[RMDB]
RNA sequence: GGGAACGACUCGAGUAGAGUCGAAAAGCAUGUUUAUGUGAACCUAAGAAUGAAUUUCAGUGACUGUAGAUUAGAAGCACUGAUUAUAGCAUUGGCUGCUUGGUGUUCACUUUAUUUGCAUCUGUGAGUUUCCAACAAGCCCUAAGUUUACUGACAAGACUAUAUAAUGCUUCGGCAUUAUAUAGUCAAAAGAAACAACAACAACAAC
Reactivity to DMS in 0.01 (KOAc 150mM, MgCl2 10mM, bicine 150mM(pH8.5), 24C), signal-to-noise 2, nucleotides 027 to 156: g030c020a040u010g010u010u000u020a030u020g010u000g000a050a110c010c020u010a060a050g010a080a080u000g000a130a160u010u000u000c010a030g010u000g010a170c020u000g030u000a160g020a230u010u010a150g010a160a100g000c020a050c000u030g010a070u000u000a120u000a170g000c040a150u000u000g020g050c080u010g000c060u010u000g010g030u010g000u000u020c030a040c020u000u000u010a040u000u010u010g000c030a150u000c080u000g050u010g020a120g010u000u000u000c020c070a010a170c090a060a140g000c000c000c020u000a040a130g010u000u010u000a130c050u010g010a090c150a140a220
Reactivity to 2A3 in 0.01 (KOAc 150mM, MgCl2 10mM, bicine 150mM(pH8.5), 24C), signal-to-noise 4, nucleotides 027 to 156: g000c010a020u030g040u080u130u070a110u160g040u020g000a000a000c010c000u010a040a030g040a050a130u170g050a050a120u030u000u030c000a010g020u000g250a300c040u060g050u180a080g090a300u150u140a100g060a240a000g000c010a010c010u000g010a000u040u040a060u040a020g000c040a060u050u200g180g010c050u030g000c010u020u010g050g000u150g030u110u000c000a020c000u020u050u040a050u010u080u040g010c020a030u020c050u030g060u020g050a060g050u040u080u010c040c000a000a020c030a080a050g060c010c010c010u070a100a050g030u000u050u100a160c020u050g050a020c020a110a160

An RNA of 207 nucleotides, treated with DMS and 2A3 and read out base by base. The DMS profile rests on 3,408 reads.